[RMDB]
RNA sequence: GGGAACGACUCGAGUAGAGUCGAAAAAAUUAAAGGCUUAUAUGACUAUCGUGAGGAACAUGAUGCGUGUGGUAUUGGUUUUUAUGCGAAUAUGGAUAAUAAAAGGUCUCACGACAUCAUUGAUAAAAACAACAGGUGCAUUCGUGCACCUGUUGUUAAAAGAAACAACAACAACAAC
Reactivity to 2A3 in 0.01 (KOAc 150mM, MgCl2 10mM, bicine 150mM(pH8.5), 24C), signal-to-noise 2, nucleotides 027 to 126: a010a010u300u300a160a000a010g110g080c040u280u000a000u060a000u150g070a020c000u030a090u010c000g030u000g070a070g100g000a020a020c130a090u100g000a000u000g000c000g110u010g150u220g040g000u120a130u060u080g050g060u000u000u000u000u270a040u060g040c000g030a090a000u290a060u000g000g110a020u020a020a020u060a080a220a110a000g020g000u040c000u000c000a000c000g060a100c000a000u000c000a000u010u010g130a050u200a300a000a020
Reactivity to DMS in 0.01 (KOAc 150mM, MgCl2 10mM, bicine 150mM(pH8.5), 24C), signal-to-noise 1, nucleotides 027 to 126: a150a000u000u010a050a060a070g070g000c050u000u000a070u000a080u000g040a080c010u000a060u000c150g060u000g000a060g000g000a120a090c070a010u000g000a020u050g000c040g010u000g000u020g020g050u050a060u030u060g000g010u000u010u000u000u010a000u010g000c060g010a060a000u080a090u030g020g020a010u000a020a010u030a070a060a070a040g000g000u010c000u000c000a000c040g010a050c150a000u000c070a040u000u000g010a140u000a010a070a000